[RMDB]
RNA sequence: GGGAACGACUCGAGUAGAGUCGAAAAUUGUACACCUUCGGGUGUACAAGCUGUCUUGUCGCUAGCAAACGAUCAAAGCUAGCGACUAGACUUUAUUGAUCGCGACGUGCGCUUUCGAGCGCACGAAGACGCUAUAAAAGUUCGCUUUUAUAGCGUCAAAAGAAACAACAACAACAAC
Reactivity to 2A3 in 0.01 (KOAc 150mM, MgCl2 10mM, bicine 150mM(pH8.5), 24C), signal-to-noise 6, nucleotides 027 to 126: u020u000g000u000a000c000a000c000c000u020u060c230g110g010g000u000g000u000a000c000a000a000g000c030u030g000u010c010u010u020g000u000c000g000c010u000a000g010c020a080a090a120c120g140a120u210c100a080a080a000g000c000u000a000g060c000g010a000c000u000a000g000a000c000u020u070u010a140u030u090g130a090u120c060g000c030g160a110c020g020u000g000c010g020c020u070u040u120c230g080a010g000c000g000c010a010c000g000a000a000
Reactivity to DMS in 0.01 (KOAc 150mM, MgCl2 10mM, bicine 150mM(pH8.5), 24C), signal-to-noise 6, nucleotides 027 to 126: u000u000g010u000a010c000a000c000c000u010u010c210g030g020g010u000g000u000a000c000a010a010g020c170u000g010u000c010u000u000g010u000c000g010c000u000a000g010c010a050a090a120c130g010a070u000c100a090a160a150g000c000u000a000g010c000g000a000c000u000a010g010a020c040u010u010u000a070u010u000g000a060u000c050g010c210g020a160c020g010u000g010c000g010c000u000u000u010c180g010a030g010c000g010c000a010c000g000a050a090

Overview: The record gives the reactivity of an RNA of 177 nucleotides to 2A3 and DMS. For DMS, 10,589 sequencing reads were counted. Reactivities are given for positions 27 through 126. 2A3 adducts were read by reverse transcription with SuperScript II with manganese. The reactions ran in a buffer of 150 mM KOAc, 10 mM MgCl2 and 150 mM bicine (pH 8.5), at 24 C. For 2A3, 13,667 sequencing reads were counted. For DMS the reverse transcriptase was MarathonRT.